[RMDB]
RNA sequence: GGGAACGACUCGAGUAGAGUCGAAAAGAUAUGGACGUCUCAAGGGAGCGUAUUAUCGGAAACGAUAAUAACGCGAGGAUCUUGGGACGUCCUAAGUCAAACCGUGGUAUCUUCGGAUACCACGGAACACAUUAAGUUCCUUCGGGAACUUAAUGUGAAAAGAAACAACAACAACAAC
Reactivity to DMS in 0.01 (KOAc 150mM, MgCl2 10mM, bicine 150mM(pH8.5), 24C), signal-to-noise 3, nucleotides 027 to 126: g000a040u000a210u010g000g000a010c000g010u000c000u000c000a000a010g020g020g010a120g020c000g020u000a020u000u000a000u000c000g000g000a050a040a090c010g000a010u000a010a000u000a080a040c010g010c000g000a130g020g010a120u010c000u000u000g000g010g000a000c010g010u000c000c000u000a000a040g000u010c020a120a090a190c010c000g020u000g000g020u000a000u000c000u000u020c280g010g010a000u000a000c000c000a000c000g000g000a050a090
Reactivity to 2A3 in 0.01 (KOAc 150mM, MgCl2 10mM, bicine 150mM(pH8.5), 24C), signal-to-noise 4, nucleotides 027 to 126: g020a010u010a010u060g000g000a000c000g010u000c010u000c020a030a030g100g020g020a300g030c010g010u000a000u010u000a000u000c000g010g030a010a020a010c010g020a010u000a010a010u160a300a120c000g020c010g040a080g080g070a170u010c000u000u000g000g010g010a000c000g010u000c000c000u000a000a000g000u010c010a000a040a110c010c000g000u010g000g000u010a010u010c020u050u110c300g100g000a000u000a010c000c000a000c010g000g010a010a000